The record gives the reactivity of an RNA of 177 nucleotides to 2A3 and DMS. The reactions ran in a buffer of 150 mM KOAc, 10 mM MgCl2 and 150 mM bicine (pH 8.5), at 24 C. DMS adducts were read by reverse transcription with MarathonRT. The data come from the RNA Mapping Database (RMDB), library OK2TST.
[RMDB]
RNA sequence: GGGAACGACUCGAGUAGAGUCGAAAAUAAUCCUAGCACUUUGGGAGGCCGAGGUGGGCUUAUUACCUGAGGCCGGGAGUUCUAGACCAGCCUGGCCAACAUGGUGAAACCCCAUCUCUACUAAAGAACCUUAGGAUAUCUUCGGAUAUCCUAAGGUAAAAGAAACAACAACAACAAC
Reactivity to 2A3 in 0.01 (KOAc 150mM, MgCl2 10mM, bicine 150mM(pH8.5), 24C), signal-to-noise 2, nucleotides 027 to 126: u060a020a080u000c000c010u030a050g040c020a020c080u090u070u070g000g020g030a060g200g000c080c050g010a000g000g030u010g000g000g000c010u100u130a050u040u010a100c010c000u010g000a010g010g040c030c000g010g030g010a020g010u220u110c130u270a110g050a140c010c020a050g060c010c000u000g000g000c000c010a020a000c080a050u210g000g000u000g000a000a010a010c020c020c000c000a000u000c010u010c000u030a030c020u020a010a060a050g030a070
Reactivity to DMS in 0.01 (KOAc 150mM, MgCl2 10mM, bicine 150mM(pH8.5), 24C), signal-to-noise 2, nucleotides 027 to 126: u000a040a080u010c000c000u010a060g010c090a060c050u000u000u000g010g020g000a080g000g010c150c080g000a030g010g020u000g000g000g010c040u010u000a090u000u000a020c020c090u010g010a110g000g010c030c030g030g010g000a090g010u000u000c060u000a080g010a040c130c090a110g000c010c000u010g020g000c010c000a020a050c120a160u010g000g000u000g000a020a020a090c210c000c000c020a010u000c020u000c000u010a070c030u010a020a050a080g010a160